[RMDB]
RNA sequence: GGGAACGACUCGAGUAGAGUCGAAAAUUAUUGCAAAGUUCAGGGCUACCAGAGAAAGAAAGCUCCAAAGCACUCCGGCAUCUGGAAUCAGCUAAGGAAGAAGUUCAGUCCAAGGAACCAGAUAAAGCGUUUAAUUAAAUUUCGAUUUAAUUAAACGAAAAGAAACAACAACAACAAC
Reactivity to 2A3 in 0.01 (KOAc 150mM, MgCl2 10mM, bicine 150mM(pH8.5), 24C), signal-to-noise 1, nucleotides 027 to 126: u070u010a020u020u080g000c020a090a140a180g000u060u120c040a020g040g030g000c000u000a020c050c010a000g070a040g070a160a230a010g060a050a030a020g060c000u000c010c060a070a070a010g000c000a030c040u000c000c020g020g000c030a090u040c120u120g020g050a010a050u120c030a070g000c010u010a050a040g060g000a020a110g050a090a000g010u080u100c070a000g060u000c000c000a000a000g100g000a030a010c000c010a060g050a200u140a150a100a110g140
Reactivity to DMS in 0.01 (KOAc 150mM, MgCl2 10mM, bicine 150mM(pH8.5), 24C), signal-to-noise 3, nucleotides 027 to 126: u000u010a080u000u000g030c050a090a120a100g020u000u000c040a090g010g000g020c040u000a050c060c070a120g020a080g010a140a080a150g000a120a110a160g000c060u000c060c100a060a130a110g010c040a060c100u000c040c040g010g030c120a070u000c070u000g010g020a080a050u020c190a080g010c010u010a030a190g020g000a040a070g020a070a090g000u010u010c100a090g040u000c020c030a080a210g000g020a060a100c040c060a120g000a060u000a030a070a110g000
Description: An RNA of 177 nucleotides, treated with 2A3 and DMS and read out base by base. The reactions ran in a buffer of 150 mM KOAc, 10 mM MgCl2 and 150 mM bicine (pH 8.5), at 24 C. Source: RMDB library OK2TST, as collected in RNAgym.